[RMDB]
RNA sequence: GGGAACGACUCGAGUAGAGUCGAAAACAAUGUGAGAAUGGACUAAUACAGAUGGUAUGAGAUCGCUACCAGGAAGACAAUUAAAAGCCAUGGAUGAUUACAGACCAUGAAAGGGAGGGUGAGUUGAGAAAGUGCCCAGCACAAUGUCUGACACGUAUGCUUAGUUAGUCUUCGGACUAACUAAGCAAAAAGAAACAACAACAACAAC
Reactivity to 2A3 in 0.01 (KOAc 150mM, MgCl2 10mM, bicine 150mM(pH8.5), 24C), signal-to-noise 2, nucleotides 027 to 156: c060a000a110u120g050u070g030a000g100a060a120u100g000g030a060c070u090a020a090u140a130c080a090g090a060u040g020g000u070a000u120g030a030g000a110u010c010g000c060u020a030c010c040a000g080g000a020a010g030a020c070a010a050u090u120a190a110a000a000g030c030c000a000u030g000g000a010u030g000a010u040u040a020c040a050g050a050c000c000a010u100g020a090a030a020g030g000g000a030g000g000g000u040g030a060g000u040u100g050a080g080a020a050a030g040u030g040c080c170c020a020g000c040a000c000a050a140u160g050u040c020u000g040a000c030a000c060g150u180a080
Reactivity to DMS in 0.01 (KOAc 150mM, MgCl2 10mM, bicine 150mM(pH8.5), 24C), signal-to-noise 2, nucleotides 027 to 156: c070a060a060u010g000u010g010a080g040a090a050u000g020g010a140c020u000a050a150u000a150c020a120g000a150u000g020g010u000a040u020g020a130g020a060u000c050g030c070u000a100c050c020a080g010g020a040a070g030a080c020a060a090u000u000a040a080a090a130g000c040c030a050u000g000g020a180u000g000a180u000u000a110c070a090g000a110c060c010a040u020g020a060a130a100g040g020g010a060g000g000g010u010g010a090g020u000u000g010a070g000a040a050a070g030u010g000c000c020c000a090g020c090a140c080a090a060u000g050u010c030u000g020a100c040a030c080g010u010a160
An RNA of 207 nucleotides, treated with 2A3 and DMS and read out base by base.